Conditions: 150 mM KOAc, 10 mM MgCl2 and 150 mM bicine (pH 8.5), 24 C. The record gives the reactivity of an RNA of 177 nucleotides to DMS and 2A3. For DMS the reverse transcriptase was MarathonRT. It was measured as part of the RMDB library OK2TST.
RNA sequence: GGGAACGACUCGAGUAGAGUCGAAAAGCUCUAGGAUGCUGCGGCAGGUUCUGCACAGGGGCUUGAGGACGUGUUUCUCCCGGCUCGGCCACUUCAUUGCCAGUCACCCUGUCUUCUUCGCCUCGGCGAAGCGCCGUAUGUUCGCAUACGGCGCUUCAAAAGAAACAACAACAACAAC
Reactivity to DMS in 0.01 (KOAc 150mM, MgCl2 10mM, bicine 150mM(pH8.5), 24C), signal-to-noise 3, nucleotides 027 to 126: g010c030u020c030u000a110g030g010a070u010g010c040u000g020c130g000g010c060a060g000g000u010u000c060u020g010c110a100c110a070g010g010g000g010c060u000u000g000a060g020g010a050c090g010u000g010u000u000u010c060u010c010c120c030g030g020c010u000c070g020g000c030c130a080c140u010u000c140a090u010u000g000c040c020a050g010u000c040a180c040c010c030u000g020u000c030u000u000c020u000u010c120g000c030c020u010c120g010g030c070
Reactivity to 2A3 in 0.01 (KOAc 150mM, MgCl2 10mM, bicine 150mM(pH8.5), 24C), signal-to-noise 2, nucleotides 027 to 126: g020c010u010c030u090a110g090g070a130u240g040c020u040g020c050g030g000c020a030g080g000u120u170c060u050g020c080a000c050a050g000g010g020g010c000u050u150g000a060g060g000a030c050g110u140g060u120u150u020c030u030c040c000c020g000g010c010u070c080g040g000c000c010a050c000u210u150c110a150u000u290g000c020c000a020g030u050c020a080c010c000c040u000g020u000c000u040u010c020u050u010c070g010c030c020u030c020g020g010c050